[RMDB]
RNA sequence: GGGAACGACUCGAGUAGAGUCGAAAAUAAACACCUCGAAUGAGGUGGAGAAACGUGCACAUAAGAGGCUCGAGAGGUGCACGUAAAAGCGAGCCUACAAAGGUCGAGGAAAACUCGACCCCAAAUGAGUCAUCGUCCUGUUCGCAGGAUGAUGACUAAAAGAAACAACAACAACAAC
Reactivity to DMS in 0.01 (KOAc 150mM, MgCl2 10mM, bicine 150mM(pH8.5), 24C), signal-to-noise 5, nucleotides 027 to 126: u030a090a080a160c000a010c000c010u000c000g030a100a070u040g010a000g010g010u000g000g020a130g010a060a100a090c030g030u000g000c010a000c000a110u050a090a090g000a100g000g020c000u000c000g020a150g020a120g010g000u010g000c000a000c000g000u000a010a040a080a100g010c080g010a020g010c000c010u010a060c160a050a110a110g000g000u000c000g000a010g000g000a140a070a120a100c010u000c000g000a000c000c000c060c050a010a110a090u030g020
Reactivity to 2A3 in 0.01 (KOAc 150mM, MgCl2 10mM, bicine 150mM(pH8.5), 24C), signal-to-noise 7, nucleotides 027 to 126: u130a000a040a000c000a000c010c000u010c020g200a230a230u300g000a010g000g010u020g010g000a080g050a000a120a000c010g000u000g000c010a010c010a030u230a150a070g060a080g100g000c000u010c010g100a120g020a070g060g220u010g000c000a000c010g020u060a040a040a000a000g120c040g000a000g000c000c010u010a040c040a020a090a000g010g000u000c000g000a000g010g030a070a090a040a050c000u000c000g000a000c000c000c000c010a080a120a100u250g040